[RMDB]
RNA sequence: GGGAACGACUCGAGUAGAGUCGAAAAAAUAGGGCGUGAAAUCAGUUGGCGAUCGAACGACGGGGCAUACAAGGUCCUCUACACAAUGACCGUAGCGCGAGCUACCAGUAAGAAGUAGAGGAAGCCGCCCAUAAAAGUGAUUCGUCACUUUUAUGGGAAAAGAAACAACAACAACAAC
Reactivity to DMS in 0.01 (KOAc 150mM, MgCl2 10mM, bicine 150mM(pH8.5), 24C), signal-to-noise 5, nucleotides 027 to 126: a090a060u020a090g010g000g010c020g000u000g020a070a090a070u010c070a080g000u000u000g020g020c040g000a040u010c060g000a080a070c090g000a070c070g000g000g010g010c060a080u020a030c190a100a070g000g020u000c010c000u000c010u000a000c000a030c080a090a240u000g000a100c270c260g000u000a000g000c010g000c300g010a210g010c000u000a000c000c010a060g010u010a030a010g000a080a110g000u000a010g000a020g000g000a040a040g010c050c020g020
Reactivity to 2A3 in 0.01 (KOAc 150mM, MgCl2 10mM, bicine 150mM(pH8.5), 24C), signal-to-noise 6, nucleotides 027 to 126: a000a010u220a050g030g000g000c040g000u040g050a040a040a060u080c050a060g040u050u040g070g000c020g040a060u030c060g030a060a050c020g070a020c020g010g010g020g000c030a030u070a120c050a090a060g040g010u020c000c000u000c000u020a000c090a000c010a030a060u020g000a010c000c000g000u000a000g000c040g010c030g020a020g000c000u000a000c000c000a000g000u000a020a010g020a090a010g000u000a000g000a000g000g000a000a000g020c000c000g020